The record gives the reactivity of an RNA of 207 nucleotides to DMS and 2A3. 2A3 adducts were read by reverse transcription with SuperScript II with manganese. The data come from the RNA Mapping Database (RMDB), library M2RFOK.
RNA sequence: GGGAACGACUCGAGUAGAGUCGAAAAAGCACGGGUUUUGAGGACGCAUUUUGUCCGUGCGGUAAUGCCCUCCUUUACACUUUCUCGCAUGGUGCGGGAGUGUGGAGAGGAAACAAAAGCUAGUCUCGAUAGGCGGUUAACUUCGGUUAACCGCCAACUUUUAUAUCACGUUCGCGUGAUAUAAAAGAAAAGAAACAACAACAACAAC
Reactivity to DMS in 0.01 (KOAc 150mM, MgCl2 10mM, bicine 150mM(pH8.5), 24C), signal-to-noise 2, nucleotides 027 to 156: a110g010c000a050c010g000g010g000u000u000u000u030g020a140g010g000a050c050g000c080a150u000u000u000u000g000u000c000c020g000u000g000c000g020g010u000a080a070u000g000c030c010c010u000c020c020u010u000u000a080c000a020c020u000u000u000c010u010c010g030c000a300u000g050g020u000g050c000g010g000g000a000g020u010g050u000g000g000a020g000a060g000g000a090a040a080c060a010a040a040a090g030c050u000a150g010u000c010u000c080g010a210u000a160g040g010c010g000g030u000u000a000a000c010u000u010c300g040g030u000u000a000a010c000c000g030c020c000a000a000
Reactivity to 2A3 in 0.01 (KOAc 150mM, MgCl2 10mM, bicine 150mM(pH8.5), 24C), signal-to-noise 5, nucleotides 027 to 156: a000g000c000a000c000g010g000g000u010u000u000u020g070a120g030g000a010c020g010c080a120u010u000u000u000g010u020c000c000g000u000g000c000g010g020u120a070a030u160g030c000c000c000u040c010c010u000u010u020a000c010a000c000u060u130u030c010u000c010g030c030a110u260g250g060u300g160c000g010g010g000a010g000u020g000u000g000g000a030g000a000g010g030a040a020a010c030a000a000a000a010g070c020u090a040g010u000c000u000c040g040a100u130a140g000g010c000g000g010u000u000a000a000c000u040u070c270g040g000u000u000a000a000c000c000g000c000c000a000a000

Record summary: The 2A3 profile rests on 5,264 reads.